[RMDB]
RNA sequence: GGGAACGACUCGAGUAGAGUCGAAAAACUGCGGUAUUCGUACCGCAGUACAUAAAAAGGAUAAAAUACGAGUAGCCCGAAACGCAAGCGAGCACUACUGGCGCAAGAACCACUUCGGUGGUUCUAAGUAACACAUAUCAUUCGUGAUAUGUGUUACAAAAGAAACAACAACAACAAC
Reactivity to DMS in 0.01 (KOAc 150mM, MgCl2 10mM, bicine 150mM(pH8.5), 24C), signal-to-noise 9, nucleotides 027 to 126: a030c000u000g000c000g010g010u000a020u000u010c180g030u000a000c000c000g020c000a000g010u000a020c120a070u010a030a060a060a080a090g010g010a120u000a050a060a090a080u010a070c050g000a050g010u000a080g010c030c010c010g010a050a050a070c110g010c090a050a060g010c040g000a060g010c070a060c040u000a050c060u000g000g010c040g020c120a110a030g000a020a000c000c000a010c000u000u000c170g030g010u000g010g010u000u000c000u000a020a100
Reactivity to 2A3 in 0.01 (KOAc 150mM, MgCl2 10mM, bicine 150mM(pH8.5), 24C), signal-to-noise 9, nucleotides 027 to 126: a000c000u000g000c000g000g000u020a040u020u080c160g020u030a010c000c000g000c000a000g000u010a000c010a010u290a020a120a010a020a010g140g010a080u170a130a160a060a030u180a090c050g010a020g060u050a020g030c020c020c030g020a080a090a000c040g000c040a020a060g040c020g080a020g030c020a010c070u100a020c020u070g060g000c030g000c060a040a010g000a000a000c000c000a010c010u030u080c240g090g000u000g000g000u000u000c000u000a010a010

Record summary:
Conditions: 150 mM KOAc, 10 mM MgCl2 and 150 mM bicine (pH 8.5), 24 C. Structure probing data (DMS and 2A3) for a 177-nucleotide construct. The 2A3 profile rests on 28,414 reads.